An RNA of 207 nucleotides, treated with DMS and 2A3 and read out base by base. It was measured as part of the RMDB library OK3TST. DMS adducts were read by reverse transcription with MarathonRT.
[RMDB]
RNA sequence: GGGAACGACUCGAGUAGAGUCGAAAAACACCGACCAUCUCGCCCGACGAAAUCUGGGGCGACAAGGUCGAACAGAUCGAGUCGACAUUCGAGUUCUGGGCGUCACGCGAAAGCCUGAACACGGUCUACCGGGCCGCGCUGUCGAGUGAGGCGUCGCCCGAAGUAGUCUAUUCGUAGACUACUUCGGAAAAGAAACAACAACAACAAC
Reactivity to DMS in 0.01 (KOAc 150mM, MgCl2 10mM, bicine 150mM(pH8.5), 24C), signal-to-noise 1, nucleotides 027 to 156: a030c030a110c090c010g020a050c030c020a190u010c040u000c010g020c010c000c030g040a130c010g030a180a110a150u000c110u020g010g000g050g020c010g000a000c030a070a090g000g020u000c020g010a030a080c080a140g000a130u010c060g000a130g000u000c020g020a060c070a200u000u000c000g020a100g020u000u000c030u020g050g020g030c020g000u020c040a080c000g040c040g040a080a040a030g020c010c050u020g000a090a040c000a130c000g030g000u010c030u020a180c170c110g010g010g040c010c040g000c080g000c060u000g010u010c000g000a060g000u010g010a060g010g020c010g000u000c030g010c060
Reactivity to 2A3 in 0.01 (KOAc 150mM, MgCl2 10mM, bicine 150mM(pH8.5), 24C), signal-to-noise 4, nucleotides 027 to 156: a000c070a010c020c000g000a000c000c000a050u070c010u010c020g000c000c020c010g110a140c060g120a190a100a110u220c180u280g030g000g010g000c010g010a010c010a030a070g010g000u000c000g010a020a030c050a050g110a070u070c020g020a000g130u010c020g020a050c030a060u070u070c040g010a020g060u090u020c090u160g020g000g000c020g010u040c040a030c040g060c020g090a100a060a010g010c020c050u050g060a070a020c080a010c050g040g020u010c020u080a200c060c090g020g000g000c000c010g000c020g010c030u030g020u060c020g070a050g030u050g020a050g030g020c000g030u040c020g050c020